[RMDB]
RNA sequence: GGGAACGACUCGAGUAGAGUCGAAAAUACUAGCAUUCGGUUCCAACCGUGGAUGGAUACUCAAAGGUUGGCUGAGUUCCUUCCUCCGGCCUUGGUUCCGAUGCUCCAUCCAAGGCCGGAAACCAAAGUAGUAGGUUAUAUUCGUAUAACCUACUACAAAAGAAACAACAACAACAAC
Reactivity to DMS in 0.01 (KOAc 150mM, MgCl2 10mM, bicine 150mM(pH8.5), 24C), signal-to-noise 8, nucleotides 027 to 126: u010a100c090u010a040g000c080a060u000u010c030g010g000u010u010c070c050a050a090c050c040g010u000g010g000a050u000g000g000a080u010a050c070u000c030a040a090a100g010g010u000u000g010g000c120u000g010a060g010u000u000c010c020u000u000c060c040u000c030c010g010g000c020c020u000u000g010g000u000u000c060c040g000a060u000g010c040u000c070c050a070u010c010c010a010a020g000g010c020c010g000g000a010a030a060c150c100a060a100a130
Reactivity to 2A3 in 0.01 (KOAc 150mM, MgCl2 10mM, bicine 150mM(pH8.5), 24C), signal-to-noise 1, nucleotides 027 to 126: u150a020c080u040a020g040c020a070u060u110c030g020g020u080u080c050c020a060a040c030c040g080u060g040g010a030u040g030g040a050u100a200c020u030c040a060a080a080g180g010u080u060g070g000c030u020g010a000g010u000u010c000c000u020u030c010c020u010c020c010g010g000c010c000u010u000g000g010u080u020c030c010g030a030u040g020c010u000c010c010a030u020c000c000a010a000g020g000c020c010g010g000a020a010a010c040c010a070a060a040

The record gives the reactivity of an RNA of 177 nucleotides to DMS and 2A3. The RNA was probed in 150 mM KOAc, 10 mM MgCl2 and 150 mM bicine (pH 8.5) at 24 C. For DMS, 15,814 sequencing reads were counted. As a SHAPE reagent, 2A3 marks flexible, mostly unpaired nucleotides at the ribose 2'-OH.